[RMDB]
RNA sequence: GGGAACGACUCGAGUAGAGUCGAAAAUUCUGGAAGUUUAAAGAGAGCUCCACCGGUUAGAAAGAGUUCCAGUACCUGCAGAGGCAUACGACACAACCGCCGACUUUUCGUCCAAUACUGCAACGCCGUUGUCAGCGGUAUUCGUACCGCUGACAACAAAAGAAACAACAACAACAAC
Reactivity to 2A3 in 0.01 (KOAc 150mM, MgCl2 10mM, bicine 150mM(pH8.5), 24C), signal-to-noise 2, nucleotides 027 to 126: u090u020c000u000g020g030a070a050g060u040u140u300a160a230a000g200a070g010a010g020c000u000c000c000a100c020c010g020g060u150u080a070g030a100a200a020g050a020g010u000u030c010c020a000g000u050a040c010c010u030g020c010a000g000a100g170g010c000a040u140a080c090g050a030c060a000c020a080a050c050c000g030c020c020g050a060c020u110u080u040u070c010g000u000c000c000a020a050u070a140c050u060g090c040a050a100c070g030c030c060